Annotation
Chemical mapping of a 207-nucleotide RNA with DMS and 2A3. The RNA was probed in 150 mM KOAc, 10 mM MgCl2 and 150 mM bicine (pH 8.5) at 24 C. The DMS profile rests on 8,850 reads. For 2A3, 3,009 sequencing reads were counted.

[RMDB]
RNA sequence: GGGAACGACUCGAGUAGAGUCGAAAAUACUUAGUACGCGCGUAGUUGCAGGCAUUCCGGGUGCGGCAACUGACGCGGAAGACUUUUCCCAGAGUGUGCGCUUCAACUGGCGUGCUGAGUAGUGCACGAAUUGCACGUACGUUCGCGUACGUGCAAAAUAGGUAGGAAAAUUCGUUUUCCUACCUAUAAAAGAAACAACAACAACAAC
Reactivity to DMS in 0.01 (KOAc 150mM, MgCl2 10mM, bicine 150mM(pH8.5), 24C), signal-to-noise 3, nucleotides 027 to 156: u010a060c050u000u010a070g040u000a100c010g040c000g030c020g050u000a050g030u000u000g000c000a040g010g040c000a010u010u000c020c300g010g040g090u000g010c020g000g010c020a010a010c010u010g010a020c000g010c020g010g020a060a110g010a130c120u000u010u000u000c000c000c000a270g010a170g020u000g000u010g010c000g010c010u000u000c070a100a130c120u010g020g020c050g030u010g030c000u000g000a100g030u000a080g030u000g000c030a060c040g020a090a180u000u000g000c000a010c000g000u010a010c020g000u000u010c300g020c040g030u000a020c000g000u000g000c000a000a000a050
Reactivity to 2A3 in 0.01 (KOAc 150mM, MgCl2 10mM, bicine 150mM(pH8.5), 24C), signal-to-noise 3, nucleotides 027 to 156: u090a010c000u010u000a000g000u020a010c000g000c010g000c000g000u020a000g000u000u000g000c010a050g160g000c010a020u080u080c150c200g160g040g000u010g000c030g010g000c000a000a000c000u060g160a040c000g000c000g000g000a010a010g160a080c020u150u150u050u020c000c000c000a000g010a010g020u170g000u010g000c010g000c020u050u040c070a270a260c120u020g030g000c000g000u000g000c000u010g000a010g010u040a000g000u020g010c010a000c020g030a060a080u050u030g010c010a000c030g000u000a000c000g010u010u060c190g000c000g090u030a000c000g000u010g000c000a000a000a000